Chemical mapping of a 177-nucleotide RNA with DMS and 2A3. Values cover nucleotides 27 to 126. For DMS the reverse transcriptase was MarathonRT. 2A3 adducts were read by reverse transcription with SuperScript II with manganese.

RNA sequence: GGGAACGACUCGAGUAGAGUCGAAAAGAUAUGGAAGGACAUGCUUCAGGUGGCGAAGAACUCGGAAACGAGGGAGCCAAGCAGAGCAACAGCCUUCCUAAGUCAAACCCGAACUUCGGUUCGGGAACACUGCCCAUAUGUUCGCAUAUGGGCAGUGAAAAGAAACAACAACAACAAC
Reactivity to DMS in 0.01 (KOAc 150mM, MgCl2 10mM, bicine 150mM(pH8.5), 24C), signal-to-noise 2, nucleotides 027 to 126: g010a090u000a300u020g000g020a010a000g000g000a060c050a180u000g000c000u000u000c000a300g000g000u000g000g000c020g020a040a230g000a120a170c000u000c000g000g000a080a090a130c030g000a010g010g030g000a080g030c000c000a020a000g000c000a260g000a000g010c010a000a110c210a090g010c000c000u000u000c000c010u000a020a060g000u000c030a090a040a100c000c010c000g010a020a000c010u000u090c210g030g000u000u000c000g020g000g020a050a050
Reactivity to 2A3 in 0.01 (KOAc 150mM, MgCl2 10mM, bicine 150mM(pH8.5), 24C), signal-to-noise 1, nucleotides 027 to 126: g000a010u090a030u140g000g010a000a000g000g020a030c070a120u080g010c010u000u040c020a000g090g000u030g020g000c030g140a300a030g020a090a050c010u020c010g020g000a070a060a010c000g000a030g000g000g000a010g000c020c000a000a000g000c020a000g000a010g020c020a020a060c060a050g050c000c010u000u030c000c000u000a100a000g080u030c070a110a010a150c000c000c010g010a010a000c030u050u170c300g140g000u020u000c000g010g000g000a000a000